Structure probing data (2A3 and DMS) for a 177-nucleotide construct. DMS adducts were read by reverse transcription with MarathonRT. For 2A3, 1,265 sequencing reads were counted. Reactivities are given for positions 27 through 126. Conditions: 150 mM KOAc, 10 mM MgCl2 and 150 mM bicine (pH 8.5), 24 C.

RNA sequence: GGGAACGACUCGAGUAGAGUCGAAAACUGCGGGCUGCCAUGGAUCUGUCAGAUACGCAAGCUGAGGAGACAUUCUGUCUGCUGCCAUGGUGUACUGAGUGAGAUCAUUAGUACCAAUAGAGACGAAAGGAGAUAACGCAUUCGUGCGUUAUCUCCUAAAAGAAACAACAACAACAAC
Reactivity to 2A3 in 0.01 (KOAc 150mM, MgCl2 10mM, bicine 150mM(pH8.5), 24C), signal-to-noise 1, nucleotides 027 to 126: c020u050g020c000g070g040g000c000u000g010c030c040a040u070g140g000a100u060c040u060g140u140c030a030g010a050u060a060c100g010c110a060a080g000c000u080g040a050g040g120a030g020a050c020a080u150u080c040u100g030u000c010u050g050c000u000g000c020c000a090u090g030g080u070g000u050a040c030u000g020a010g010u120g070a120g020a030u060c000a040u020u120a010g020u040a100c010c020a030a070u120a090g050a020g040a030c070g150a130a030
Reactivity to DMS in 0.01 (KOAc 150mM, MgCl2 10mM, bicine 150mM(pH8.5), 24C), signal-to-noise 2, nucleotides 027 to 126: c070u000g000c080g020g000g020c070u010g010c050c070a070u000g040g010a090u010c010u000g000u010c000a070g010a100u000a000c150g020c110a070a080g000c020u010g020a300g000g010a020g010a050c070a140u000u010c190u010g010u010c010u000g000c020u000g000c050c120a060u000g000g010u000g050u020a030c010u000g010a050g010u000g020a090g000a100u010c030a090u020u000a070g000u000a060c030c060a060a150u000a070g000a070g020a080c120g020a050a080